Description: The data come from the RNA Mapping Database (RMDB), library ARCHII. Structure probing data (DMS and 2A3) for a 207-nucleotide construct.
[RMDB]
RNA sequence: GGGAACGACUCGAGUAGAGUCGAAAACCGUGCCGCCCAGCACGCGAGGGGUCUCGACAACGGGUGCGCUAGUCCAUCUGCUAUGUGAGCAGGGUGGGCGACACCGUCAAAUUGCGGGGAUCUCCUAUAGCUCAUCGUACCCGCUCAGCGCUCGAAACAUAAACUCGUAGUUCGCUACGAGUUUAUGAAAAGAAACAACAACAACAAC
Reactivity to DMS in 0.01 (KOAc 150mM, MgCl2 10mM, bicine 150mM(pH8.5), 24C), signal-to-noise 2, nucleotides 027 to 156: c050c070g050u010g020c070c000g000c000c050c050a190g000c010a030c070g020c060g030a150g030g000g050g030u000c040u040c020g010a050c010a030a050c000g010g000g030u010g010c030g010c070u010a110g020u000c010c010a060u010c000u000g000c040u000a130u020g030u020g020a080g040c000a020g020g010g000u000g020g000g010c010g000a070c030a060c020c000g040u010c060a070a100a100u010u000g000c010g000g010g010g020a070u010c010u000c030c010u010a120u080a090g010c010u010c050a060u010c030g000u000a140c030c050c010g010c030u000c010a060g010c060g000c010u010c050g000a150a090a220
Reactivity to 2A3 in 0.01 (KOAc 150mM, MgCl2 10mM, bicine 150mM(pH8.5), 24C), signal-to-noise 4, nucleotides 027 to 156: c040c000g000u000g000c000c040g030c020c000c010a000g000c010a000c020g020c030g040a030g040g030g000g030u020c020u020c030g100a090c050a130a020c050g040g000g010u040g000c050g030c090u100a050g020u000c020c020a030u010c020u010g000c010u060a070u300g180u200g220a030g010c020a060g060g040g000u010g000g010g000c010g020a030c040a030c000c000g050u080c030a070a100a200u110u110g000c000g010g000g030g020a060u020c030u110c050c010u110a120u120a120g040c010u020c060a080u030c030g050u020a060c000c000c020g030c030u040c030a020g010c020g030c030u030c060g050a070a080a010